[RMDB]
RNA sequence: GGGAACGACUCGAGUAGAGUCGAAAAUCAGUUAUAAUGCGUAUAAUACGUUGGUCUAUCUAUUAAACAGAAAUGGUGAGUUUGAGACUGUUACGACUAAUGGAUGUACAUGUAUUUCGGAAGCAGAAGCGUGAUUACUAUUCGUAGUAAUCACGCUAAAAGAAACAACAACAACAAC
Reactivity to 2A3 in 0.01 (KOAc 150mM, MgCl2 10mM, bicine 150mM(pH8.5), 24C), signal-to-noise 3, nucleotides 027 to 126: u070c010a020g050u050u100a170u090a260a070u090g000c030g020u050a050u040a150a130u060a030c020g000u000u050g060g010u000c010u040a060u000c010u000a020u060u080a160a150a020c050a040g100a040a130a060u120g050g050u090g060a120g020u050u180u160g100a090g020a020c010u050g020u050u030a030c080g000a010c030u030a030a000u020g020g000a000u020g020u040a030c020a020u060g040u010a040u010u070u040c090g050g040a080a000g000c040a010g040a120
Reactivity to DMS in 0.01 (KOAc 150mM, MgCl2 10mM, bicine 150mM(pH8.5), 24C), signal-to-noise 5, nucleotides 027 to 126: u010c040a140g010u020u000a060u000a100a080u010g020c020g020u010a090u000a040a040u000a090c020g020u000u010g000g010u000c050u000a080u010c020u000a080u010u000a020a060a080c090a110g000a070a060a070u000g010g020u000g000a140g010u010u010u010g010a130g010a090c060u000g010u000u000a080c150g000a050c120u010a020a030u000g000g000a050u000g000u000a040c040a050u000g010u000a050u010u000u000c120g020g000a080a120g020c120a090g000a120

Chemical mapping of a 177-nucleotide RNA with 2A3 and DMS. Conditions: 150 mM KOAc, 10 mM MgCl2 and 150 mM bicine (pH 8.5), 24 C. The 2A3 profile rests on 2,921 reads. For DMS the reverse transcriptase was MarathonRT. The data come from the RNA Mapping Database (RMDB), library OK2TST. 2A3 adducts were read by reverse transcription with SuperScript II with manganese.